[RMDB]
RNA sequence: GGGAACGACUCGAGUAGAGUCGAAAAGUGAAGCGGCCGGCGUCCACCUCGGCUACAAGUGCUCGAUCCGCAAGCCAUGGUGGAGCACACCAUCGCUGUGGAUGCCCGACCUCUUUAUGCUGCGCCAUACCUAUCGGGUGUUCGCACCCGAUAGGUAAAAAGAAACAACAACAACAAC
Reactivity to DMS in 0.01 (KOAc 150mM, MgCl2 10mM, bicine 150mM(pH8.5), 24C), signal-to-noise 2, nucleotides 027 to 126: g010u020g000a030a100g000c160g000g000c010c020g040g050c000g030u000c020c000a030c030c300u000c020g030g020c080u010a060c300a090a120g010u000g000c070u010c050g000a030u000c020c130g000c180a070a070g040c060c100a040u000g000g030u000g020g000a090g020c090a120c010a130c140c080a070u000c220g000c060u020g000u000g010g000a010u000g000c100c000c020g000a050c010c010u010c020u010u010u010a030u010g010c070u000g020c030g000c070c010a140
Reactivity to 2A3 in 0.01 (KOAc 150mM, MgCl2 10mM, bicine 150mM(pH8.5), 24C), signal-to-noise 1, nucleotides 027 to 126: g030u040g000a010a010g020c020g000g050c010c010g030g030c020g010u000c020c000a010c000c040u010c030g010g050c000u070a030c090a180a130g000u000g070c010u030c060g090a130u090c070c000g090c180a110a040g000c010c020a160u240g060g000u020g030g000a030g000c040a010c000a020c020c010a060u050c020g050c050u040g020u010g000g010a010u000g020c010c020c010g060a080c000c010u030c050u000u060u040a070u120g030c020u040g050c010g070c000c010a050